Structure probing data (DMS and 2A3) for a 207-nucleotide construct. The RNA was probed in 150 mM KOAc, 10 mM MgCl2 and 150 mM bicine (pH 8.5) at 24 C. High DMS reactivity at an A or C suggests that its Watson-Crick edge is free.

[RMDB]
RNA sequence: GGGAACGACUCGAGUAGAGUCGAAAAAAGGGUCGGGGAUAUGGUCCGGGCCGGGCAGCAGAUCGGCCUCUCCGGCAAUACCGGCAUCAGCUCGGGCCCUCAUCUGCACUUUGGGACCUUCCGGGGCGGCUGGCCGAAUGAUGUUAACCCGCUCGGCCAAAGAUAGAUGUUUCGACAUCUAUCUUUGAAAAGAAACAACAACAACAAC
Reactivity to DMS in 0.01 (KOAc 150mM, MgCl2 10mM, bicine 150mM(pH8.5), 24C), signal-to-noise 1, nucleotides 027 to 156: a080a080g010g020g020u020c040g010g000g040g020a140u000a050u010g010g000u000c000c020g000g010g030c030c030g040g010g050c060a070g010c040a110g010a130u000c090g010g000c020c000u000c060u000c010c000g000g000c060a090a110u000a300c040c020g020g000c070a110u000c080a060g000c010u010c060g020g010g040c010c000c000u000c040a030u000c050u000g020c060a110c140u000u000u000g040g020g010a070c040c030u000u000c030c000g000g010g030g000c050g030g000c050u000g070g020c000c000g020a110a120u010g010a120u000g020u000u000a120a110c010c000c000g020c040u000c030g030g020c050
Reactivity to 2A3 in 0.01 (KOAc 150mM, MgCl2 10mM, bicine 150mM(pH8.5), 24C), signal-to-noise 1, nucleotides 027 to 156: a000a030g070g000g040u120c090g050g030g000g020a040u090a090u250g060g000u060c020c020g010g000g000c110c040g000g000g020c040a050g040c000a010g030a280u130c040g000g000c050c010u020c010u010c000c010g030g000c010a020a080u110a150c020c010g000g030c030a050u110c080a170g030c050u050c040g040g010g000c020c000c000u050c020a080u030c030u080g040c040a060c110u090u070u060g020g000g110a120c060c000u030u040c000c010g000g010g000g000c000g000g000c070u080g000g000c000c000g020a010a020u120g030a030u070g040u080u140a060a040c020c010c010g000c000u010c020g010g030c020